The data come from the RNA Mapping Database (RMDB), library 15KLIB. The record gives the reactivity of an RNA of 170 nucleotides to 2A3 and DMS. The 2A3 profile rests on 7,461 reads. Values are in units of 0.01, from 0 to 300, in steps of 10. The RNA was probed in 150 mM KOAc, 10 mM MgCl2 and 150 mM bicine (pH 8.5) at 24 C.
RNA sequence: GGGAACGACUCGAGUAGAGUCGAAAAGACGAAGCCCCCACCGGGCGCUCCCCUCGGCGGGCCGUCCAUUGGGUUCACACCCCCAGGCCGCGGGCCGGCUACUCUUCUUUCUCUUUCGUCGUCAUCCACACCCUGCGGUUCGCCGCAGGGAAAAGAAACAACAACAACAAC
Reactivity to 2A3 in 0.01 (KOAc 150mM, MgCl2 10mM, bicine 150mM(pH8.5), 24C), signal-to-noise 3, nucleotides 027 to 129: g010a000c040g050a050a020g010c000c000c000c050c060a050c030c030g030g010g000c050g050c050u070c000c000c010c000u070c050g150g010c050g020g010g000c010c000g020u000c030c010a080u070u140g010g000g000u170u140c040a060c020a020c110c000c000c010c010a030g030g000c000c010g060c070g050g110g000c030c000g000g000c000u050a040c020u040c000u130u010c010u030u130u020c030u000c000u020u020u010c020g010u000c020g020u010c020a110u040c010c000a010c010a020
Reactivity to DMS in 0.01 (KOAc 150mM, MgCl2 10mM, bicine 150mM(pH8.5), 24C), signal-to-noise 3, nucleotides 027 to 129: g030a060c100g000a150a170g000c000c000c050c000c140a110c150c180g030g000g000c050g030c090u020c030c070c150c020u060c050g000g080c050g010g000g090c050c030g030u000c050c070a120u040u080g000g000g000u130u170c090a210c020a300c100c040c000c020c050a070g000g000c050c000g060c080g060g000g030c040c000g000g030c040u020a050c030u070c060u050u000c040u060u050u000c030u020c160u030u080u000c090g020u070c010g060u080c000a090u040c010c040a060c020a090